[RMDB]
Chemical mapping of a 207-nucleotide RNA with DMS and 2A3. 2A3 is a SHAPE reagent: it acylates the 2'-hydroxyl of flexible nucleotides of all four kinds. The reactions ran in a buffer of 150 mM KOAc, 10 mM MgCl2 and 150 mM bicine (pH 8.5), at 24 C.
RNA sequence: GGGAACGACUCGAGUAGAGUCGAAAACAGAACUUGAUGGGCCGUGUGCUUAACCAGGACAAGAUCUCCUUCUCUCCAACGUUGUUGCCAACUCAUGAUUCUCCUAACCUGUGCUUGGAGAGACGUGCUACCAUAUAGGUGUUCGCACCUAUAUGAAUCUCUAGAAAUGAUUCGUCAUUUCUAGAGAAAAAGAAACAACAACAACAAC
Reactivity to DMS in 0.01 (KOAc 150mM, MgCl2 10mM, bicine 150mM(pH8.5), 24C), signal-to-noise 2, nucleotides 027 to 156: c050a160g000a050a100c030u010u000g020a100u000g010g030g020c020c030g000u000g000u000g030c010u000u000a070a090c050c020a070g040g010a130c060a070a070g020a140u000c020u000c020c040u010u010c040u000c000u000c030c020a040a110c100g010u010u010g010u000u000g000c010c040a040a150c060u010c020a060u000g010a150u000u000c010u010c010c030u000a080a030c020c020u000g020u000g010c040u020u000g000g000a040g000a050g000a040c070g030u000g020c080u000a110c080c000a020u010a020u000a000g010g040u000g020u010u000c300g040c010a030c010c000u010a000u000a000u000g050a060a100
Reactivity to 2A3 in 0.01 (KOAc 150mM, MgCl2 10mM, bicine 150mM(pH8.5), 24C), signal-to-noise 2, nucleotides 027 to 156: c050a040g070a070a010c050u070u090g020a030u090g040g080g000c050c070g170u080g040u120g070c080u080u100a080a090c050c020a060g050g020a040c030a060a070g000a110u030c030u030c050c000u020u010c020u010c010u020c030c020a070a080c090g000u030u010g030u040u020g060c030c010a060a060c080u020c050a080u060g040a180u100u000c030u030c040c000u050a050a110c010c020u080g090u130g090c090u040u050g000g010a000g000a000g000a000c020g030u040g000c020u060a090c040c000a000u010a000u000a010g000g010u010g000u050u030c130g040c090a010c040c000u000a000u000a000u010g000a000a040
Annotation: It was measured as part of the RMDB library M2RFPK. Values cover nucleotides 27 to 156.